[RMDB]
This 207-nucleotide RNA was probed chemically with DMS and 2A3.
The RNA was probed in 150 mM KOAc, 10 mM MgCl2 and 150 mM bicine (pH 8.5) at 24 C.
The DMS profile rests on 5,373 reads.
Values cover nucleotides 27 to 156.

RNA sequence: GGGAACGACUCGAGUAGAGUCGAAAAUCCGUGGCAUUCAGGUUGGCUAAGGAGGGAUGAACCGGGCCAGGGGUGAAAACCAGCAGCCAAGAGUUCCCGUGGUAGGCAGUAGUGGGAUAGCGUACCGGAGUGGACUGCCGUUAUCAGCCCAACCGAUACUAAACAAUGUGUUCGCACAUUGUUUAGUAAAAGAAACAACAACAACAAC
Reactivity to DMS in 0.01 (KOAc 150mM, MgCl2 10mM, bicine 150mM(pH8.5), 24C), signal-to-noise 3, nucleotides 027 to 156: u010c010c020g050u010g020g000c050a180u010u000c080a100g040g030u000u000g130g020c050u000a130a100g030g030a180g030g030g030a080u000g020a100a150c060c030g010g000g050c010c020a120g060g010g010g010u000g000a080a040a100a060c030c000a110g040c090a170g000c020c010a060a090g010a240g000u000u000c000c010c030g030u000g020g020u020a090g030g030c010a050g030u000a060g030u010g000g000g000a120u010a100g010c080g020u000a060c040c000g020g020a140g010u020g010g000a040c030u000g000c020c020g000u000u000a090u000c040a100g010c040c000c010a040a190c010c030g010a300u010
Reactivity to 2A3 in 0.01 (KOAc 150mM, MgCl2 10mM, bicine 150mM(pH8.5), 24C), signal-to-noise 4, nucleotides 027 to 156: u030c030c010g070u080g060g030c120a100u070u090c110a130g040g000u020u010g010g010c030u070a100a060g070g020a050g000g040g010a040u110g050a030a070c020c020g010g000g010c030c030a050g030g040g000g010u060g060a030a040a010a060c030c000a010g080c030a010g020c020c030a060a030g070a020g040u030u040c000c000c000g010u030g010g020u020a040g010g010c040a020g000u100a010g040u140g030g030g020a060u090a050g050c040g000u020a040c000c040g010g040a080g040u130g030g040a030c020u020g020c000c000g000u000u020a070u050c050a010g010c020c000c000a010a030c010c020g000a000u000